Structure probing data (2A3 and DMS) for a 207-nucleotide construct. DMS adducts were read by reverse transcription with MarathonRT. Values cover nucleotides 27 to 156. The data come from the RNA Mapping Database (RMDB), library M2RFPK. In probing experiments dimethyl sulfate is read out at A N1 and C N3, which are open when not base-paired. The DMS profile rests on 2,626 reads.
[RMDB]
RNA sequence: GGGAACGACUCGAGUAGAGUCGAAAAACUAAUCCAAAGCAAGUAUAGGAGAACAGGUUUUUAUCUAUUUUUAGGCAGAUAAAAAAUAGUAUUUGACAGUCUAACACUAACUGAACAAUAAGUGUUAAAAAGUCGUCUCUGUUCGCAGAGACGACAACACCAUUAGUAUGUUCGCAUACUAAUGGUGAAAAGAAACAACAACAACAAC
Reactivity to 2A3 in 0.01 (KOAc 150mM, MgCl2 10mM, bicine 150mM(pH8.5), 24C), signal-to-noise 5, nucleotides 027 to 156: a000c050u080a090a030u010c010c010a040a010a010g010c010a030a020g020u030a030u060a090g010g020a030g020a090a070c110a160g070g040u030u000u020u010u010a060u030c000u010a010u010u020u010u010u030a030g060g000c050a030g070a190u130a060a080a010a000a000a010u010a000g020u020a040u030u040u050g020a010c000a000g000u000c000u000a000a000c000a000c000u000a010a000c000u010g030a030a010c010a010a010u010a010a000g000u000g000u020u010a010a090a010a010a010g000u000c000g000u000c000u000c000u010g060u060u060c150g000c070a000g000a000g000a000c000g000a000c000a000a000
Reactivity to DMS in 0.01 (KOAc 150mM, MgCl2 10mM, bicine 150mM(pH8.5), 24C), signal-to-noise 2, nucleotides 027 to 156: a160c070u000a170a220u000c000c020a120a090a220g040c040a100a080g020u010a090u010a130g020g000a080g040a120a100c100a220g020g000u000u020u000u000u000a110u040c000u000a030u000u010u000u000u000a070g030g000c090a070g000a100u000a000a000a100a060a040a010u000a010g020u010a040u000u000u000g000a150c000a000g000u010c020u000a040a000c020a020c010u010a040a070c030u000g000a160a180c300a050a040u000a010a040g010u000g050u000u000a070a060a080a100a110g000u000c010g040u000c010u000c000u000g030u000u000c290g020c020a020g020a030g000a040c000g000a010c000a010a090